Chemical mapping of a 177-nucleotide RNA with 2A3 and DMS. Reactivities are rounded to 0.1 and cut off at 0 and 3. Reactivities are given for positions 27 through 126. DMS adducts were read by reverse transcription with MarathonRT. Source: RMDB library OK2TRN, as collected in RNAgym. For 2A3 the reverse transcriptase was SuperScript II with manganese.
RNA sequence: GGGAACGACUCGAGUAGAGUCGAAAAGACGGUACGAGCGCUGCGCAGUGAUCAGCGAUCGAUCGGCGCGAUCAGCUGCGCUGAGUACGAUCGCUCGGCCUGAUCAGUACUCGUGAUCGGUACUGCGCACAUACAUACGGUUCGCCGUAUGUAUGUGAAAAGAAACAACAACAACAAC
Reactivity to 2A3 in 0.01 (KOAc 150mM, MgCl2 10mM, bicine 150mM(pH8.5), 24C), signal-to-noise 9, nucleotides 027 to 126: g090a010c020g010g020u070a020c010g010a000g000c020g000c020u010g000c030g000c020a010g010u030g120a300u040c010a010g000c000g000a020u030c010g020a050u030c030g020g000c010g000c010g020a140u160c140a050g130c070u170g000c020g000c000u000g000a010g040u120a100c030g000a030u010c000g000c010u020c030g010g000c000c000u010g000a030u030c010a000g020u010a020c020u000c040g030u040g060a060u020c010g000g010u050a090c040u060g100c070g010
Reactivity to DMS in 0.01 (KOAc 150mM, MgCl2 10mM, bicine 150mM(pH8.5), 24C), signal-to-noise 9, nucleotides 027 to 126: g010a150c060g010g000u000a030c020g000a030g010c020g020c040u000g000c090g010c000a010g010u000g010a110u000c040a040g010c010g010a010u000c020g010a080u000c020g010g010c010g020c000g010a150u010c220a140g020c190u010g010c010g010c000u000g000a030g010u010a110c050g010a020u000c000g020c000u000c060g020g000c030c000u010g000a030u000c000a030g010u000a060c020u000c040g010u000g010a020u000c020g010g010u010a090c030u000g010c190g010